[RMDB]
RNA sequence: GGGAACGACUCGAGUAGAGUCGAAAAGACUUGACCUGGACGUGGGAUUUGCAGUGGCGUGUCUCCGCACACCUGAACUCGCGGCGAUUCACCCUGUUCUUCUCGAGGAGCUUCCGGAGGGGAUGACGCGAUCUGACGAAGGUGAACUCACGAUUACCUAUAAUUGGGAAUUCGUUCCCAAUUAUAGAAAAGAAACAACAACAACAAC
Reactivity to DMS in 0.01 (KOAc 150mM, MgCl2 10mM, bicine 150mM(pH8.5), 24C), signal-to-noise 3, nucleotides 027 to 156: g020a060c020u000u010g020a130c020c020u000g050g000a080c040g050u010g010g010g010a110u000u010u000g020c020a100g020u000g010g020c020g040u000g010u000c010u010c030c020g070c040a060c080a090c050c020u000g010a100a130c090u000c070g030c040g030g000c060g010a120u000u000c000a100c010c000c010u000g010u000u000c020u010u000c010u000c020g010a150g010g010a200g010c020u000u010c030c010g030g000a090g020g010g020g020a090u010g000a070c030g010c080g000a060u000c030u010g040a150c060g020a070a080g030g000u000g000a080a090c050u010c030a110c080g010a180u000u000a100c100
Reactivity to 2A3 in 0.01 (KOAc 150mM, MgCl2 10mM, bicine 150mM(pH8.5), 24C), signal-to-noise 6, nucleotides 027 to 156: g030a010c030u050u060g050a050c000c020u040g030g060a030c030g070u130g030g010g030a080u020u040u120g010c020a020g020u060g190g020c050g010u020g010u000c000u000c050c000g010c010a050c010a020c040c060u110g090a130a090c030u050c180g020c010g010g000c020g020a010u020u010c010a080c010c000c020u010g020u040u030c000u050u000c010u020c030g050a090g020g010a040g020c050u070u040c030c020g000g020a030g000g010g020g010a030u100g020a030c020g020c030g070a060u030c050u050g020a070c030g030a050a020g020g010u050g030a060a050c010u020c040a040c050g120a120u090u140a060c010